[RMDB]
RNA sequence: GGGAACGACUCGAGUAGAGUCGAAAAUGCGAACGACUCCAACUACGCCCUCGCCGCCUAAAUCCCGGUGAGCGUCCAUCCUUUCAGUGCCGAUACUGGUUGGAAUGGGCGUCGACUCUUAUCGGAUCGUGGUGAAGCCCGCCCUUGGCCGAUCUGCCCUACGAGAACUGUUCGCAGUUCUCGUAGGAAAAGAAACAACAACAACAAC
Reactivity to 2A3 in 0.01 (KOAc 150mM, MgCl2 10mM, bicine 150mM(pH8.5), 24C), signal-to-noise 1, nucleotides 027 to 156: u090g040c010g030a120a000c040g090a150c080u080c100c030a090a040c080u120a040c070g030c010c020c000u000c010g000c000c000g040c020c010u090a110a100a010u050c010c010c000g020g000u010g000a050g030c020g000u040c000c000a000u000c000c020u000u050u040c000a000g000u020g270c080c090g110a080u140a300c000u000g060g000u000u000g020g000a150a210u000g000g000g000c010g000u000c000g000a010c000u000c010u000u050a050u070c010g000g010a010u030c020g000u000g000g080u060g030a120a020g010c010c000c010g050c040c000c040u050u060g010g000c000c010g050a060u000c010u060g000c000

Structure probing data (2A3) for a 207-nucleotide construct. For 2A3, 874 sequencing reads were counted. The reactions ran in a buffer of 150 mM KOAc, 10 mM MgCl2 and 150 mM bicine (pH 8.5), at 24 C.